[RMDB]
RNA sequence: GGGAACGACUCGAGUAGAGUCGAAAAAAGAGCUUCAACCCAAGACUCUGUUUGGGGACAUACGCCGGUUGAGAUGUAUAUUUCGGUGGUGUCCCGCCUGCGCUGUAGGCUGGCUUGCCCGCCUUGAGACGCUUACGAAUCACGGCAAGCGCACGCCAACUUACUACGCUUUCGAGCGUAGUAAGUUAAAAGAAACAACAACAACAAC
Reactivity to DMS in 0.01 (KOAc 150mM, MgCl2 10mM, bicine 150mM(pH8.5), 24C), signal-to-noise 2, nucleotides 027 to 156: a060a050g000a040g000c030u000u000c110a130a220c080c050c040a150a140g010a020c030u000c010u010g030u020u000u000g000g040g020g020a030c030a040u000a060c030g010c010c010g040g020u010u000g000a200g030a200u010g010u000a150u020a040u000u000u000c010g040g040u000g000g020u000g010u010c010c010c010g020c030c030u000g020c080g010c040u000g030u000a060g030g060c040u000g000g010c030u010u000g020c010c010c030g000c050c060u010u030g000a100g020a190c050g000c080u000u000a100c030g010a100a270u000c050a140c120g020g010c010a020a040g010c020g030c030a030c090g040c020c000
Reactivity to 2A3 in 0.01 (KOAc 150mM, MgCl2 10mM, bicine 150mM(pH8.5), 24C), signal-to-noise 2, nucleotides 027 to 156: a010a000g020a020g050c040u120u110c090a150a140c040c010c000a030a100g110a200c010u010c010u050g130u130u290u160g030g000g010g000a000c020a020u300a220c010g000c010c010g040g010u150u220g050a070g030a200u070g130u110a060u040a050u160u140u070c000g000g000u010g020g000u000g010u040c010c000c010g000c000c000u050g030c080g010c010u090g040u130a030g030g010c020u020g050g000c000u000u040g050c000c010c010g020c020c030u060u080g050a060g010a000c030g050c180u080u090a100c050g090a040a010u030c010a010c050g000g000c000a000a020g010c050g010c070a010c060g000c010c000

Conditions: 150 mM KOAc, 10 mM MgCl2 and 150 mM bicine (pH 8.5), 24 C. The record gives the reactivity of an RNA of 207 nucleotides to DMS and 2A3. DMS adducts were read by reverse transcription with MarathonRT. Values cover nucleotides 27 to 156. 2A3 adducts were read by reverse transcription with SuperScript II with manganese.